[RMDB]
RNA sequence: GGGAACGACUCGAGUAGAGUCGAAAAGGUAAUGGACGACGGCGGCGUGUGGCGAACAGGGAUACCGGUAGUCAGUGUCUGUAACAUCCCAAGGGGCGGCGGAGCUAGCACCCCGACACGUUAAGGCAAAACUUCGCACGGUUCGCCGUGCGAAGAACUAUGAUGAAUACUUCGGUAUUCAUCAUAGAAAAGAAACAACAACAACAAC
Reactivity to DMS in 0.01 (KOAc 150mM, MgCl2 10mM, bicine 150mM(pH8.5), 24C), signal-to-noise 2, nucleotides 027 to 156: g020g010u000a070a120u010g000g000a090c030g010a080c060g040g030c040g000g010c030g020u000g030u000g020g050c020g000a060a100c060a100g040g000g010a080u010a050c000c000g040g010u000a090g010u010c030a060g030u000g000u000c000u020g000u000a090a100c060a120u000c000c010c010a140a200g000g000g000g030c010g000g010c030g010g000a120g000c020u000a110g020c070a070c020c000c020c000g010a040c050a030c080g020u000u000a050a090g000g040c040a040a090a060a080c010u000u020c000g020c040a010c010g000g000u000u000c300g010c000c030g000u000g000c030g000a020a000g000a060a100
Reactivity to 2A3 in 0.01 (KOAc 150mM, MgCl2 10mM, bicine 150mM(pH8.5), 24C), signal-to-noise 4, nucleotides 027 to 156: g080g010u090a080a050u150g030g010a020c030g000a020c020g040g020c010g010g010c030g010u070g010u020g040g030c080g010a070a050c080a060g080g000g000a020u060a080c010c070g020g060u070a030g050u070c060a020g020u020g020u040c040u020g050u020a040a050c030a090u050c010c010c030a040a080g000g000g020g000c060g010g010c030g040g030a060g050c070u070a010g010c050a080c010c000c010c010g020a010c010a000c040g050u090u110a060a030g040g010c050a040a020a040a110c000u000u000c000g010c000a000c000g020g000u030u030c110g020c100c000g010u000g000c000g000a000a000g000a000a000
The record gives the reactivity of an RNA of 207 nucleotides to DMS and 2A3.
2A3 adducts were read by reverse transcription with SuperScript II with manganese.
Conditions: 150 mM KOAc, 10 mM MgCl2 and 150 mM bicine (pH 8.5), 24 C.
For 2A3, 3,563 sequencing reads were counted.
For DMS, 3,765 sequencing reads were counted.